[RMDB]
RNA sequence: GGGAACGACUCGAGUAGAGUCGAAAAACACCUGGUCAAAGAGGAAGGCCUUUCCUGAUAAAGGAGGACCAUUCUCAGUCAAGGGUAUGUGAGUACCUGUUCUCCCCUGCCAGAAUCUCAAACGAGCCUAACACGCUAUGUUCGCAUAGCGUGUUAGAAAAGAAACAACAACAACAAC
Reactivity to DMS in 0.01 (KOAc 150mM, MgCl2 10mM, bicine 150mM(pH8.5), 24C), signal-to-noise 2, nucleotides 027 to 126: a040c150a070c120c000u010g010g000u000c070a040a030a090g000a010g010g010a010a050g020g020c030c010u000u000u000c010c000u000g010a120u000a060a130a010g030g000a050g020g000a010c000c020a080u000u000c000u010c010a070g010u000c110a080a130g010g000g000u000a030u000g010u020g010a220g000u000a040c000c000u000g000u010u010c050u000c010c030c010c060u000g000c030c010a030g010a100a110u000c030u010c050a060a110a150c230g010a110g000c280
Reactivity to 2A3 in 0.01 (KOAc 150mM, MgCl2 10mM, bicine 150mM(pH8.5), 24C), signal-to-noise 2, nucleotides 027 to 126: a000c030a000c000c010u020g000g070u140c090a140a060a000g020a020g000g020a030a030g010g030c000c000u110u250u020c010c000u040g020a100u140a300a150a000g000g000a010g000g040a000c010c010a030u060u000c010u010c010a010g090u080c070a060a110g010g000g010u040a050u060g130u020g080a030g020u040a030c050c050u030g160u170u040c040u020c040c000c010c000u040g010c000c000a000g020a120a100u010c050u000c000a010a100a050c090g020a010g000c000